[RMDB]
RNA sequence: GGGAACGACUCGAGUAGAGUCGAAAAAGGUCUUAACGUCAGGGAAAGGAUUCUGCUGUCGGUCCCACUCCAAAGUUCACAGAAUGGGUGGUGGGCACAGAAUCUGGACUCUGCUUGUGGAAUGGUACCAUAGUUAUCAGUUCGCUGAUAACUAUGGAAAAGAAACAACAACAACAAC
Reactivity to DMS in 0.01 (KOAc 150mM, MgCl2 10mM, bicine 150mM(pH8.5), 24C), signal-to-noise 6, nucleotides 027 to 126: a060g020g010u000c020u000u000a100a060c100g010u010c020a020g000g000g010a020a270a220g000g000a010u000u000c000u000g010c200u000g020u000c040g030g010u000c210c000c000a030c010u010c010c070a040a080a120g020u010u010c210a110c270a080g010a070a110u000g010g000g020u000g000g010u000g020g010g000c000a020c010a010g000a020a010u000c010u000g000g000a300c000u000c010u000g010c060u000u000g020u000g000g000a070a090u000g020g000u010a140
Reactivity to 2A3 in 0.01 (KOAc 150mM, MgCl2 10mM, bicine 150mM(pH8.5), 24C), signal-to-noise 6, nucleotides 027 to 126: a000g120g020u040c030u100u070a090a030c040g070u070c060a000g000g000g010a020a020a000g020g000a000u010u010c000u020g130c080u020g040u030c030g100g180u100c030c000c000a000c020u040c010c000a160a120a050g070u190u160c120a120c020a180g140a190a100u070g010g010g010u030g000g010u070g110g000g000c010a000c000a010g000a000a000u000c010u010g010g000a000c010u000c010u010g010c010u040u090g020u040g050g110a150a120u100g090g030u080a070
Source information:
This 177-nucleotide RNA was probed chemically with DMS and 2A3. The reactions ran in a buffer of 150 mM KOAc, 10 mM MgCl2 and 150 mM bicine (pH 8.5), at 24 C. For 2A3, 10,504 sequencing reads were counted. The DMS profile rests on 6,943 reads.